[RMDB]
RNA sequence: GGGAACGACUCGAGUAGAGUCGAAAAGAUAUGGACCCGGACGAUAAGCUGCUAUCGGAAACGAUAGGCAGCUUUUGACGUCCGUGUCCUAAGUCAAAAGUGAAACCAUGUUCGCAUGGUUUCACAACAUAUAUUAGUAGUUCGCUACUAAUAUAUGAAAAGAAACAACAACAACAAC
Reactivity to DMS in 0.01 (KOAc 150mM, MgCl2 10mM, bicine 150mM(pH8.5), 24C), signal-to-noise 8, nucleotides 027 to 126: g000a020u000a160u010g000g000a010c000c080c000g000g000a010c000g010a140u000a040a030g020c000u000g010c000u000a000u000c010g010g010a030a030a060c000g010a010u000a030g020g010c000a000g010c000u000u000u000u000g010a180c030g000u000c000c000g010u000g010u000c000c000u000a000a060g000u000c010a070a080a120a130g010u000g000a010a010a010c000c000a010u000g000u000u010c230g020c000a010u000g000g000u000u000u000c000a000c000a070a130
Reactivity to 2A3 in 0.01 (KOAc 150mM, MgCl2 10mM, bicine 150mM(pH8.5), 24C), signal-to-noise 4, nucleotides 027 to 126: g010a010u020a020u050g000g000a000c000c020c000g020g010a000c010g070a110u160a300a050g010c010u010g020c000u010a000u000c000g010g010a020a020a010c020g000a000u010a030g120g130c010a000g000c020u000u010u000u030g010a000c000g000u000c010c000g000u000g000u000c000c000u000a030a000g010u010c020a030a030a070a140g000u000g010a000a000a010c000c010a000u010g060u050u080c300g010c140a000u000g000g000u010u010u000c000a000c000a010a000